[RMDB]
RNA sequence: GGGAACGACUCGAGUAGAGUCGAAAAGUGCCGAGUGAAAUUCAUAGGUGCCUCGCCAAUUUGGCGGAACGACCCGGUACUCCGCGUAGUCGCGAAGUAAACGUUCAGUGUUGGCGUUCAGGCCUCAACGUCAUUAUACCUUCGGGUAUAAUGACGUAAAAGAAACAACAACAACAAC
Reactivity to 2A3 in 0.01 (KOAc 150mM, MgCl2 10mM, bicine 150mM(pH8.5), 24C), signal-to-noise 2, nucleotides 027 to 126: g030u010g050c010c020g060a040g110u100g070a140a130a080u180u130c060a060u090a140g020g000u000g070c020c020u010c020g020c000c010a080a140u190u100u270g080g000c020g000g000a010a000c020g050a070c000c010c020g010g000u020a010c010u000c020c000g030c040g030u190a100g090u200c030g000c000g040a030a010g010u060a000a050a000c020g000u000u000c020a060g020u040g010u220u060g000g000c000g000u040u060c080a010g040g080c010c010u010c060a040
Reactivity to DMS in 0.01 (KOAc 150mM, MgCl2 10mM, bicine 150mM(pH8.5), 24C), signal-to-noise 3, nucleotides 027 to 126: g020u000g040c000c030g000a120g040u010g000a030a060a100u050u020c020a080u000a090g010g020u010g000c020c090u010c030g000c000c040a050a080u020u050u030g000g040c010g000g000a010a020c010g020a160c010c020c040g020g020u010a040c000u000c020c010g030c020g040u040a090g030u040c040g000c010g000a040a020g000u000a030a030a070c020g010u010u000c030a240g000u010g010u010u000g000g000c140g030u020u000c240a070g000g010c040c020u010c070a290
Structure probing data (2A3 and DMS) for a 177-nucleotide construct. Source: RMDB library OK1LIB, as collected in RNAgym. For DMS the reverse transcriptase was MarathonRT. The 2A3 profile rests on 916 reads. The reactions ran in a buffer of 150 mM KOAc, 10 mM MgCl2 and 150 mM bicine (pH 8.5), at 24 C.